[RMDB]
RNA sequence: GGGAACGACUCGAGUAGAGUCGAAAACUUAGUUGUAAAUCCUCCUGGAACCUCGACUUUUUCAGGAACAAUCAAUGUAGAAGGACUUACUUCAGCUAACGACCUUAAUAUAACUGGCAACAAUGUAGUUGUACCCGAAAUUCGUUUCGGGUACAACAAAAGAAACAACAACAACAAC
Reactivity to 2A3 in 0.01 (KOAc 150mM, MgCl2 10mM, bicine 150mM(pH8.5), 24C), signal-to-noise 1, nucleotides 027 to 126: c000u010u000a010g040u050u030g030u080a030a040a120u000c000c000u000c000c000u010g010g000a050a080c020c090u080c100g110a140c090u130u110u000u020u000c020a000g020g000a000a050c010a040a010u120c010a040a210u150g040u090a090g080a150a000g020g050a010c010u020u030a010c000u090u050c010a010g000c000u010a000a040c040g120a060c030c010u070u090a250a000u210a060u060a140a070c060u040g010g000c010a000a030c010a000a100u110g050u080a120
Reactivity to DMS in 0.01 (KOAc 150mM, MgCl2 10mM, bicine 150mM(pH8.5), 24C), signal-to-noise 1, nucleotides 027 to 126: c100u040u000a070g000u000u020g000u010a000a080a110u000c000c010u000c020c010u000g030g000a040a040c250c100u000c120g010a100c100u000u000u000u000u010c000a000g000g000a060a060c060a020a170u020c050a040a100u010g020u010a050g000a060a060g000g000a070c060u000u000a080c060u000u010c140a030g010c060u000a090a080c090g000a050c100c010u000u000a000a100u000a080u000a110a090c030u010g030g000c060a070a050c100a030a110u000g010u010a140